Chemical mapping of a 207-nucleotide RNA with DMS and 2A3. It was measured as part of the RMDB library OK3TST. For DMS the reverse transcriptase was MarathonRT. Reactivities are rounded to 0.1 and cut off at 0 and 3. Reactivities are given for positions 27 through 156.
RNA sequence: GGGAACGACUCGAGUAGAGUCGAAAACUAGAAUGUUCUCACGCUUUCAAAGAGGUCUACAGUUGUAAGAAGUAGGGGUAACGGCUUUUGAGUGCAUAUCCAUCCCCCCACUCUGGAUGCAGGGUUGGAGGUGAGGUUCUCCUCAAAGCCUAGGAGAACCUCAUAGUAGCUUCGGCUACUAUGAGGUAAAAGAAACAACAACAACAAC
Reactivity to DMS in 0.01 (KOAc 150mM, MgCl2 10mM, bicine 150mM(pH8.5), 24C), signal-to-noise 4, nucleotides 027 to 156: c040u010a110g020a150a110u000g010u000u000c010u000c020a120c070g010c060u010u000u030c060a090a090a150g010a060g000g010u010c010u000a050c050a120g020u000u010g010u000a080a110g000a060a110g030u010a040g000g010g020g000u010a050a110c110g030g000c040u000u000u000u010g000a070g000u020g010c060a070u000a050u000c030c030a110u000c030c010c000c010c010c020a040c030u010c010u000g020g010a190u010g020c020a060g010g030g010u010u000g040g000a020g000g020u030g010a070g010g010u000u000c020u000c010c000u000c020a030a040a080g010c020c010u010a070g020g000a090g010a050
Reactivity to 2A3 in 0.01 (KOAc 150mM, MgCl2 10mM, bicine 150mM(pH8.5), 24C), signal-to-noise 4, nucleotides 027 to 156: c020u030a060g080a150a100u110g040u100u000c010u010c030a040c050g050c010u050u130u160c120a090a100a040g050a020g010g050u010c050u060a050c080a150g020u090u040g060u190a090a030g030a080a030g080u090a040g000g030g000g010u020a070a040c050g010g000c010u080u120u040u110g000a000g000u140g020c090a070u050a020u190c030c030a300u050c050c000c000c000c000c000a010c000u020c000u010g070g080a130u270g260c010a000g000g010g000u010u020g040g040a150g010g070u170g020a030g020g000u050u010c020u010c030c000u010c010a000a030a000g000c010c010u010a010g000g080a050g020a010
2A3 adducts were read by reverse transcription with SuperScript II with manganese.